[RMDB]
RNA sequence: GGGAACGACUCGAGUAGAGUCGAAAACCUGGAGAAAUAGGGUUCUUAUAAGAAUUAGAGUUUAUGACCAGGUGUGGUGCCUCGCACCUGUAAUCCCAGCAUUUUGUGAGGCUGAGUGGAUCACUUAGCCUCAGUAAUGGUUCGCCAUUACUGAGGCAAAAGAAACAACAACAACAAC
Reactivity to DMS in 0.01 (KOAc 150mM, MgCl2 10mM, bicine 150mM(pH8.5), 24C), signal-to-noise 7, nucleotides 027 to 126: c010c010u000g010g010a250g000a050a070a050u000a110g010g000g010u000u000c010u000u010a150u010a180a100g010a040a040u000u000a080g010a150g010u000u000u010a070u020g000a150c050c000a010g000g010u000g010u000g010g010u000g010c040c080u000c160g010c010a020c040c040u000g000u000a080a090u000c000c000c000a150g000c160a100u010u010u010u000g020u000g000a030g000g020c020u000g000a040g020u000g000g010a190u010c040a030c020u000u010a100
Reactivity to 2A3 in 0.01 (KOAc 150mM, MgCl2 10mM, bicine 150mM(pH8.5), 24C), signal-to-noise 3, nucleotides 027 to 126: c010c000u020g030g050a190g040a020a120a020u120a090g030g030g090u050u000c010u060u300a300u070a300a170g070a100a050u080u090a120g030a010g180u050u120u070a090u100g110a100c000c010a000g040g010u040g040u010g020g020u090g030c030c110u060c070g000c000a010c000c000u000g050u060a000a040u020c000c030c020a030g060c040a070u100u200u110u090g040u040g030a030g000g000c020u000g000a020g030u070g040g090a160u120c040a030c020u030u050a010
The record gives the reactivity of an RNA of 177 nucleotides to DMS and 2A3. The reactions ran in a buffer of 150 mM KOAc, 10 mM MgCl2 and 150 mM bicine (pH 8.5), at 24 C. It was measured as part of the RMDB library OK2TRN.